RNA sequence: GGGAACGACUCGAGUAGAGUCGAAAAUCGCUCAAACCGGUCUGUGACGGUGCUGACAUGUUCCGCCCGGUCAUCAUCGCGUGCGCAUGGUUGGGCGCUGCGCUGAUCGUCAUCGGCGUAGGCCGUAACGCACACGGGUAUUCGUACCCGUGUGCGUAAAAGAAACAACAACAACAAC
Reactivity to 2A3 in 0.01 (KOAc 150mM, MgCl2 10mM, bicine 150mM(pH8.5), 24C), signal-to-noise 1, nucleotides 027 to 126: u030c010g000c040u000c010a110a100a060c020c010g000g030u050c030u030g020u040g020a030c000g000g030u030g000c030u020g000a010c000a130u190g020u050u080c000c000g060c040c010c030g000g000u000c000a040u020c000a020u040c040g030c030g230u140g060c030g000c040a020u060g030g030u010u040g070g030g000c010g000c000u040g020c060g000c000u040g010a190u030c050g100u040c060a000u030c000g060g000c000g010u010a020g040g000c000c000g020u070a050
Reactivity to DMS in 0.01 (KOAc 150mM, MgCl2 10mM, bicine 150mM(pH8.5), 24C), signal-to-noise 2, nucleotides 027 to 126: u020c110g020c020u000c040a060a080a090c120c010g000g010u000c070u010g000u000g000a050c000g010g010u000g000c090u000g010a040c040a080u000g010u000u000c130c060g020c030c020c000g030g010u010c000a030u000c130a040u000c040g020c050g030u000g000c060g010c060a110u000g020g010u000u000g010g020g020c000g000c030u000g010c020g020c060u000g010a050u000c150g010u010c080a100u000c010g010g000c000g020u000a020g000g000c020c010g010u000a060